[RMDB]
RNA sequence: GGGAACGACUCGAGUAGAGUCGAAAAGGAGAGUCCCGCUCCUUCAGGUGAACGAUCUCGGUUGUUUCUCUGAAGGCAUGAUCACCCCGUCCGAUGCGGAAGUUUGUGCUUCCGUCGAACGCGAAAGUAAAACCCUAAAGCUUCGGCUUUAGGGUAACAUGAUCUAAGCCUUCGGGCUUAGAUCAUGAAAAGAAACAACAACAACAAC
Reactivity to 2A3 in 0.01 (KOAc 150mM, MgCl2 10mM, bicine 150mM(pH8.5), 24C), signal-to-noise 2, nucleotides 027 to 156: g050g000a060g010a040g060u070c020c010c010g070c040u010c000c000u010u050c050a050g080g040u050g120a030a000c010g040a080u010c020u080c170g060g020u020u040g010u040u070u020c020u010c010u010g010a020a000g000g000c030a110u060g040a030u130c080a020c000c000c000c010g000u000c000c000g040a030u140g060c080g020g000a000a000g000u000u180u280g190u300g030c010u000u000c020c000g010u000c000g020a060a010c000g040c010g070a010a070a020g110u160a030a110a080a080c000c000c000u010a050a000a000g000c000u010u090c190g070g000c000u000u090u010a000g000g020g000u000a000a000
Reactivity to DMS in 0.01 (KOAc 150mM, MgCl2 10mM, bicine 150mM(pH8.5), 24C), signal-to-noise 1, nucleotides 027 to 156: g010g000a170g000a130g050u020c020c020c000g020c060u010c000c000u000u000c000a040g070g000u000g020a060a060c020g020a010u000c020u000c240g060g020u010u000g010u010u010u010c020u000c030u000g010a050a060g000g010c080a050u000g000a050u000c100a140c000c010c030c010g000u000c030c000g010a060u000g030c050g020g000a010a080g020u000u000u000g000u010g010c000u000u000c000c000g050u010c020g010a030a050c020g010c070g000a140a120a100g000u000a080a040a100a080c010c000c000u000a010a010a050g010c010u020u000c300g110g000c000u000u000u000a010g000g000g010u000a000a020